[RMDB]
Conditions: 150 mM KOAc, 10 mM MgCl2 and 150 mM bicine (pH 8.5), 24 C. The record gives the reactivity of an RNA of 177 nucleotides to 2A3 and DMS. Values cover nucleotides 27 to 126. It was measured as part of the RMDB library M2PK50.

RNA sequence: GGGAACGACUCGAGUAGAGUCGAAAACACAGAAUCUUCGGAUUCUGUGAAAGGAACAAAAACAUGCAAAAGUUCCAAAAAGCAUCAAGGACAAAAGUCCAAAAACACAUCGCUUCGGCGAUGUGAACUUUUGUUAUUGGUUCGCCAAUAACAAAAGAAAAGAAACAACAACAACAAC
Reactivity to 2A3 in 0.01 (KOAc 150mM, MgCl2 10mM, bicine 150mM(pH8.5), 24C), signal-to-noise 3, nucleotides 027 to 126: c010a000c000a000g000a000a020u000c000u060u080c130g120g000a000u010u000c000u000g010u000g010a010a000a000g010g000a010a000c040a030a170a030a010a020c040a040u140g060c030a050a090a010a060g000u020u000c030c000a080a070a030a000a000g060c040a070u150c090a070a120g020g000a020c030a040a300a040a050g000u000c000c000a070a030a010a050a000c010a000c000a000u010c000g000c020u040u080c200g100g000c000g010a000u000g000u000g000a000a020
Reactivity to DMS in 0.01 (KOAc 150mM, MgCl2 10mM, bicine 150mM(pH8.5), 24C), signal-to-noise 3, nucleotides 027 to 126: c000a000c000a000g000a020a000u000c000u000u000c180g020g000a000u000u000c000u010g010u000g000a030a090a090g010g000a010a010c040a040a080a120a070a090c080a050u000g000c180a040a020a070a090g000u000u010c010c020a070a070a100a120a110g010c190a050u020c170a050a080g000g020a030c010a060a090a110a080g000u000c040c020a040a110a060a100a170c020a010c000a000u000c000g000c000u010u010c260g010g020c010g000a000u000g000u000g000a030a030